An RNA of 207 nucleotides, treated with DMS and 2A3 and read out base by base. DMS adducts were read by reverse transcription with MarathonRT. In probing experiments dimethyl sulfate is read out at A N1 and C N3, which are open when not base-paired. The DMS profile rests on 5,133 reads.

[RMDB]
RNA sequence: GGGAACGACUCGAGUAGAGUCGAAAAGAAAGAAAGAAAGAAAGGUAUGAAGUCCUAUUCACUCGUGAUAGGAUAAACUUCAUAUUGAUCGUGUAUGUGCUAACGCACAUACACGAAUGCGCAUGCAGAACUGCAUGCAUGAACAUAAUGAGUGCAACUCCUAUUAGGAUUUCGAUCCUAAUAGGAGAAAAGAAACAACAACAACAAC
Reactivity to DMS in 0.01 (KOAc 150mM, MgCl2 10mM, bicine 150mM(pH8.5), 24C), signal-to-noise 3, nucleotides 027 to 156: g010a150a040a090g010a150a080a100g000a160a060a110g010a100a140a260g020g010u000a010u000g010a030a020g010u000c020c030u000a010u000u010c060a200c170u000c270g030u010g020a030u000a020g010g010a150u000a060a100a070c020u000u000c000a020u020a020u000u010g010a080u000c000g020u000g020u010a000u000g040u000g000c000u010a170a250c300g000c000a010c000a000u000a010c010a000c000g000a000a010u000g010c060g000c010a000u000g000c020a070g010a090a160c120u000g040c050a080u010g000c000a000u000g000a030a050c050a050u000a070a120u000g010a080g020u000g000c070a080a180
Reactivity to 2A3 in 0.01 (KOAc 150mM, MgCl2 10mM, bicine 150mM(pH8.5), 24C), signal-to-noise 5, nucleotides 027 to 156: g040a020a080a000g070a040a050a010g060a060a090a000g070a060a100a000g040g000u000a000u020g000a010a000g010u020c000c000u010a020u000u120c030a030c110u090c100g080u090g020a010u000a000g020g000a030u120a070a090a020c000u000u000c000a000u000a010u030u090g030a040u040c000g000u000g000u000a000u010g000u000g000c040u110a140a050c160g000c000a000c000a000u000a010c000a000c000g010a000a010u040g000c030g000c010a000u010g000c010a010g080a300a070c200u040g000c000a010u000g000c000a010u110g040a030a010c050a040u190a150a070u190g020a020g050u070g020c020a040a080